This 207-nucleotide RNA was probed chemically with 2A3 and DMS. The RNA was probed in 150 mM KOAc, 10 mM MgCl2 and 150 mM bicine (pH 8.5) at 24 C. Values cover nucleotides 27 to 156. DMS adducts were read by reverse transcription with MarathonRT. It was measured as part of the RMDB library OK3TST. For 2A3 the reverse transcriptase was SuperScript II with manganese. The 2A3 profile rests on 487 reads. The DMS profile rests on 2,335 reads.
[RMDB]
RNA sequence: GGGAACGACUCGAGUAGAGUCGAAAAUUUUUCCAGGACCCUGUAGAGGUGGGAUUGAAUGUUUAGAUACAUGGGCAUUAGGCCGUCUCGGGGGUGGAGAUAGCUCCAUUGAAGAGCCUCAUGCUCCGGGGUAGUAUUAUAAAUCACCCAGUCAUAAAAACAUUGUCUAUUUCGAUAGACAAUGUUUAAAAGAAACAACAACAACAAC
Reactivity to 2A3 in 0.01 (KOAc 150mM, MgCl2 10mM, bicine 150mM(pH8.5), 24C), signal-to-noise 1, nucleotides 027 to 156: u060u050u000u000u000c010c000a040g090g100a040c010c000c050u020g070u250a160g030a030g030g090u070g000g000g010a100u050u140g160a100a000u010g020u060u110u110a070g030a030u030a100c120a070u070g010g000g000c000a000u000u090a060g040g020c010c040g040u020c060u070c110g100g030g010g000g000u040g040g020a080g000a100u190a100g080c000u000c030c010a160u000u100g100a220a190g010a000g010c000c000u020c000a010u060g000c010u000c000c000g020g050g000g000u040a030g010u000a040u130u080a100u100a010a130a030u040c010a060c030c020c000a000g100u040c000a100u150a070a180
Reactivity to DMS in 0.01 (KOAc 150mM, MgCl2 10mM, bicine 150mM(pH8.5), 24C), signal-to-noise 1, nucleotides 027 to 156: u020u010u000u000u000c000c000a300g050g010a100c020c030c030u000g020u000a170g000a070g050g030u000g020g000g010a090u010u010g010a090a050u010g030u000u000u000a070g010a190u000a000c070a110u000g000g010g010c000a080u000u000a100g040g020c000c010g000u000c050u000c060g000g000g010g000g040u000g010g010a120g000a180u000a100g000c000u010c010c010a210u010u010g010a110a120g010a200g000c010c020u010c060a030u010g000c020u010c020c060g020g000g010g000u000a070g020u010a100u000u000a150u010a110a070a110u010c030a050c040c000c000a280g000u000c040a130u010a090a090